[RMDB]
RNA sequence: GGGAACGACUCGAGUAGAGUCGAAAAAUCACCCCACAUUGUGAAGUGGUGCGUAUCAUUUCUGAGUAACCGAACUGGCAGAGUGAGAUUCAAGGAGAAGCUUUCCAGAAGCAGAACAUUUGAGCGAAAUAUCCUUCCCGUUCGCGGGAAGGAUAUUAAAAGAAACAACAACAACAAC
Reactivity to 2A3 in 0.01 (KOAc 150mM, MgCl2 10mM, bicine 150mM(pH8.5), 24C), signal-to-noise 4, nucleotides 027 to 126: a000u140c060a140c020c020c050c010a010c020a090u230u200g060u070g130a140a110g010u020g070g000u080g000c030g000u090a040u150c080a040u040u120u000c030u090g050a090g070u090a040a050c090c010g020a110a050c070u070g020g030c080a000g010a020g060u120g030a090g030a070u110u070c100a050a060g070g010a050g070a060a030g030c000u030u010u000c010c000a040g010a090a000g030c030a020g040a060a040c030a100u080u160u210g090a040g020c050g000a010
Reactivity to DMS in 0.01 (KOAc 150mM, MgCl2 10mM, bicine 150mM(pH8.5), 24C), signal-to-noise 4, nucleotides 027 to 126: a060u050c110a060c070c010c010c100a080c210a090u020u010g030u000g000a100a080g020u000g010g020u000g010c100g030u020a080u030c030a020u030u000u010c020u000g000a080g030u010a090a130c050c050g010a080a070c040u020g000g020c040a010g000a060g010u010g020a060g000a100u010u020c080a130a080g000g000a110g000a130a070g000c020u000u010u010c040c100a090g040a060a030g030c030a070g000a090a090c150a050u010u000u030g030a110g060c100g010a050